The record gives the reactivity of an RNA of 177 nucleotides to 2A3.
The RNA was probed in 150 mM KOAc, 10 mM MgCl2 and 150 mM bicine (pH 8.5) at 24 C.

RNA sequence: GGGAACGACUCGAGUAGAGUCGAAAACGCGACGCCCAGAUUAUCGUCACUGGAAAUCCGUAUCGUGCCGCCAUUGAUUGCCGUACCGCCGGUAUAGCUAUUUGCGCCGGUCAGCACGAGCGUGCCAGCAUCCCGAUGCUUUCGAGCAUCGGGAUGCAAAAGAAACAACAACAACAAC
Reactivity to 2A3 in 0.01 (KOAc 150mM, MgCl2 10mM, bicine 150mM(pH8.5), 24C), signal-to-noise 1, nucleotides 027 to 126: c000g030c020g050a010c040g060c050c020c000a100g010a190u090u210a080u250c050g070u090c020a010c090u010g060g000a000a140a110u030c000c030g020u060a220u150c020g000u040g010c020c070g000c010c010a110u080u110g060a120u050u210g100c030c050g000u050a080c030c050g100c000c000g000g000u040a030u030a130g000c020u150a150u150u150u300g030c070g000c070c000g000g000u060c030a020g040c000a010c010g000a040g050c040g000u060g060c000c000a000